An RNA of 207 nucleotides, treated with DMS and 2A3 and read out base by base. Reactivities are given for positions 27 through 156. For 2A3 the reverse transcriptase was SuperScript II with manganese. Source: RMDB library RNAMAK, as collected in RNAgym. Conditions: 150 mM KOAc, 10 mM MgCl2 and 150 mM bicine (pH 8.5), 24 C.
RNA sequence: GGGAACGACUCGAGUAGAGUCGAAAAGGGUGAUUUCGAUCACCCCUGUCGCGUACUACUCCUGAUAAUCUGAUGACCUUCUUCGAGUCCCAAAUAGGACUAAGACAGAGAAGCAAGGAUUACAGGAGUAUCGCUCAACGCUAUCUUCGGAUAGCAAGUGAGUGAAAGUAUUCGUACUUUCACUCACAAAAGAAACAACAACAACAAC
Reactivity to DMS in 0.01 (KOAc 150mM, MgCl2 10mM, bicine 150mM(pH8.5), 24C), signal-to-noise 2, nucleotides 027 to 156: g000g060g000u000g010a000u000u020u000c290g010a050u010c000a010c010c000c000c010u000g040u010c050g000c030g040u010a160c090u000a020c000u000c010c000u010g010a220u000a010a030u000c000u020g020a130u000g000a090c300c010u000u000c000u000u000c010g000a080g030u000c010c000c020a020a150a250u000a070g000g000a080c010u000a100a130g020a270c300a100g010a070g000a050a010g000c010a140a210g000g030a040u000u000a020c010a000g000g020a020g000u000a000u000c040g000c040u000c060a070a110c110g040c000u010a020u010c000u000u000c300g030g020a020u000a010g040c000a030a150
Reactivity to 2A3 in 0.01 (KOAc 150mM, MgCl2 10mM, bicine 150mM(pH8.5), 24C), signal-to-noise 7, nucleotides 027 to 156: g010g010g020u030g020a020u060u140u180c230g110a020u010c010a010c000c000c000c020u090g200u230c100g000c010g050u090a070c050u000a010c000u050c000c010u100g070a300u030a010a000u000c000u010g070a180u130g070a260c020c010u020u030c010u060u040c060g070a010g000u020c000c020c010a200a300a100u250a080g000g000a000c010u030a090a080g060a100c130a070g040a010g000a050a000g000c050a090a200g000g000a000u000u000a010c000a000g000g000a000g010u000a000u030c010g000c000u030c040a100a100c120g000c010u010a000u000c000u040u020c080g110g000a000u000a000g000c000a010a020